[RMDB]
Source: RMDB library M2PK50, as collected in RNAgym. An RNA of 177 nucleotides, treated with DMS and 2A3 and read out base by base. The RNA was probed in 150 mM KOAc, 10 mM MgCl2 and 150 mM bicine (pH 8.5) at 24 C. DMS adducts were read by reverse transcription with MarathonRT. For 2A3 the reverse transcriptase was SuperScript II with manganese.
RNA sequence: GGGAACGACUCGAGUAGAGUCGAAAAGCCUUACGAUUCGUCGUAAGGCAUACAAAGUUUUGGCACUAUGAGCCGGCAGCGUUGGUGCUCCCACGCGGUGCAAUACGACGGAUUUCGAUCCGUCGAACCAUGUUAUAACCUUCGGGUUAUAACAUGGAAAAGAAACAACAACAACAAC
Reactivity to DMS in 0.01 (KOAc 150mM, MgCl2 10mM, bicine 150mM(pH8.5), 24C), signal-to-noise 9, nucleotides 027 to 126: g000c000c000u000u000a000c000g000a020u000u010c200g020u000c000g010u000a000a000g000g020c000a010u000a030c160a090a100a130g010u000u000u000u000g020g020c010a090c120u000a100u010g000a100g020c020c030g000g020c050a060g000c040g010u000u000g010g020u000g010c120u000c030c000c010a110c080g000c030g000g000u000g010c050a090a080u010a160c020g010a010c000g010g010a020u000u000u010c170g010a020u000c000c000g000u000c000g000a030a110
Reactivity to 2A3 in 0.01 (KOAc 150mM, MgCl2 10mM, bicine 150mM(pH8.5), 24C), signal-to-noise 9, nucleotides 027 to 126: g000c000c000u010u000a010c000g010a010u020u070c210g040u010c000g000u140a000a000g010g000c000a000u030a010c020a000a130a030g020u020u040u130u170g030g010c020a020c080u170a120u300g080a040g040c020c010g030g000c020a060g040c020g030u150u240g030g030u110g050c030u050c010c000c000a010c010g000c020g030g070u030g000c020a030a060u090a140c020g000a000c000g000g000a000u040u060u110c140g030a020u010c000c000g000u000c000g000a000a010
For 2A3, 45,054 sequencing reads were counted. Reactivities are given for positions 27 through 126.